[RMDB]
RNA sequence: GGGAACGACUCGAGUAGAGUCGAAAAGCUCAAGGUUGUCAGAAAAUUUAAUGACUCAACGAUCUCUGAUAGGACACCUGCAAGAUUGGAAUCUGGAAAUUUUACCUGUAAUCGUUCAUGCAGCGUCAGAUCCGAUAUGGUUCGCCAUAUCGGAUCUAAAAGAAACAACAACAACAAC
Reactivity to 2A3 in 0.01 (KOAc 150mM, MgCl2 10mM, bicine 150mM(pH8.5), 24C), signal-to-noise 1, nucleotides 027 to 126: g010c040u040c140a090a030g160g020u140u000g000u050c060a040g140a120a190a020a040u110u270u110a190a110u140g020a040c020u010c100a000a170c040g040a140u060c050u070c010u190g020a160u100a100g060g000a000c010a010c030c100u050g040c130a010a010g000a040u090u190g050g100a030a060u140c090u070g040g300a070a180a200u210u180u090u110a050c000c000u040g030u100a090a110u070c020g000u000u110c010a010u060g010c000a000g030c040g140u050c040
Reactivity to DMS in 0.01 (KOAc 150mM, MgCl2 10mM, bicine 150mM(pH8.5), 24C), signal-to-noise 2, nucleotides 027 to 126: g000c030u000c030a130a140g000g010u000u020g000u000c060a030g020a040a110a070a160u020u000u010a140a120u010g030a050c020u000c070a040a110c130g010a070u000c020u010c080u000g000a110u000a090g010g010a160c070a080c060c050u000g000c050a000a050g000a050u020u020g010g000a070a060u030c010u010g010g010a080a090a130u000u010u000u000a100c040c000u000g000u010a050a050u010c050g000u010u000c030a100u000g000c040a040g000c210g020u000c130